[RMDB]
RNA sequence: GGGAACGACUCGAGUAGAGUCGAAAAUAGGCGAACGAGAGGCCCUCUCAUGUGCGGAGUUGUCACGCUGACACAAUUGUUAUGAUGUCCGAUUCCGGUAGCAUCGCGGCGAUGCUUUCAUAGGACAUCUUAUGAACCCAAGUGCUUCGGGGAAGCACCUAUUAGCUCAUUUCGAUGAGCUAAUAGGAAAAGAAACAACAACAACAAC
Reactivity to 2A3 in 0.01 (KOAc 150mM, MgCl2 10mM, bicine 150mM(pH8.5), 24C), signal-to-noise 6, nucleotides 027 to 156: u140a020g030g010c040g020a040a020c050g020a070g010a030g140g020c010c030c000u000c010u010c010a100u150g040u050g050c040g010g010a050g030u070u070g040u080c040a040c110g040c040u060g050a020c010a010c020a110a170u100u080g060u100u090a080u170g000a000u010g010u000c010c010g020a070u170u030c060c050g050g010u020a000g000c000a000u000c040g040c120g220g050c120g010a000u010g000c000u020u090u040c060a080u090a050g000g000a000c000a000u000c000u010u010a060u040g040a020a040c000c010c010a060a030g030u020g030c010u020u070c060g030g000g000g030a020a000g030c010a000
Reactivity to DMS in 0.01 (KOAc 150mM, MgCl2 10mM, bicine 150mM(pH8.5), 24C), signal-to-noise 5, nucleotides 027 to 156: u000a070g010g020c020g020a070a090c060g010a140g010a100g020g010c020c030c010u000c050u000c060a130u010g020u000g020c040g020g000a150g010u000u010g010u000c040a110c090g000c050u010g020a130c050a060c060a080a160u000u010g020u000u000a070u000g010a040u000g020u010c010c010g000a240u000u000c110c060g010g010u010a050g020c010a000u000c000g020c120g030g010c170g010a040u000g010c000u000u000u010c030a090u000a110g000g010a040c030a020u000c010u000u000a040u000g000a060a100c040c030c030a060a090g000u000g000c030u000u000c030g010g020g040g010a080a070g020c040a100

Structure probing data (2A3 and DMS) for a 207-nucleotide construct. DMS (dimethyl sulfate) methylates the pairing face of unpaired adenines and cytosines.